Record summary:
Source: RMDB library OK1LIB, as collected in RNAgym. Structure probing data (DMS and 2A3) for a 177-nucleotide construct.
RNA sequence: GGGAACGACUCGAGUAGAGUCGAAAAUUCAAAAUCAUUACAAUGAGUUAAAGAGAGCCAGGGAAUUGCAAUCUGCAGACCUUCUCUUAGGAGUACCCAGAGAAGUCCUUUCGGAUGUCAUUGUGGAGGUGGAUUACAAGUUCGCUUGUAAUCCACCAAAAGAAACAACAACAACAAC
Reactivity to DMS in 0.01 (KOAc 150mM, MgCl2 10mM, bicine 150mM(pH8.5), 24C), signal-to-noise 1, nucleotides 027 to 126: u060u030c010a080a050a050a010u080c000a020u000u040a040c140a050a010u000g000a050g010u000u010a160a040a090g010a120g000a070g030c190c090a010g000g010g010a000a140u040u010g000c060a200a060u000c050u040g010c080a080g000a090c130c000u020u000c000u020c030u040u010a050g000g020a250g020u050a120c020c030c060a110g000a090g000a010a020g000u020c150c080u000u040u000c020g000g010a130u010g000u000c040a050u000u000g000u000g030g000a140
Reactivity to 2A3 in 0.01 (KOAc 150mM, MgCl2 10mM, bicine 150mM(pH8.5), 24C), signal-to-noise 2, nucleotides 027 to 126: u160u030c050a060a000a000a050u110c120a090u070u210a060c070a040a040u150g000a020g060u040u140a090a030a020g050a000g000a000g010c030c040a040g000g060g110a120a110u160u060g000c050a010a200u050c220u210g000c000a040g050a130c000c000u030u070c000u060c000u020u180a040g010g000a040g040u100a080c000c000c010a000g030a000g000a090a000g020u000c000c000u020u080u170c040g070g000a010u060g070u020c000a000u000u110g020u030g060g080a050
The DMS profile rests on 1,350 reads. DMS adducts were read by reverse transcription with MarathonRT.